[RMDB]
RNA sequence: GGGAACGACUCGAGUAGAGUCGAAAACGUCAUCAAACUGCGGGAAAGCUCCUAUAUGGCAUGGGAUACCAAGCACGGCAUCACACAUUGUGUGUGAUGAGUGUGGCUGAGUUAAUGCACUCGGGUAAGGUAACAACCCCCAUGUCAAGAGGACCGACGCCAUUGUUCUGUUCGCAGAACAAUGGCGAAAAGAAACAACAACAACAAC
Reactivity to 2A3 in 0.01 (KOAc 150mM, MgCl2 10mM, bicine 150mM(pH8.5), 24C), signal-to-noise 2, nucleotides 027 to 156: c030g080u040c040a090u010c050a120a060a080c090u050g040c080g030g000g030a110a110a070g020c030u040c010c000u010a040u040a050u250g010g000c000a000u000g000g000g000a000u000a010c050c130a060a020g020c010a010c020g230g040c110a010u000c000a000c000a010c000a110u240u300g080u090g000u010g000u000g230a000u000g000a010g000u020g000u020g000g000c010u000g000a000g000u020u150a140a020u300g000c050a010c000u000c000g030g000g000u100a260a070g000g000u020a020a030c000a020a040c010c000c000c000c000a000u000g000u000c000a000a000g010a000g020g020a000c000c010g060a030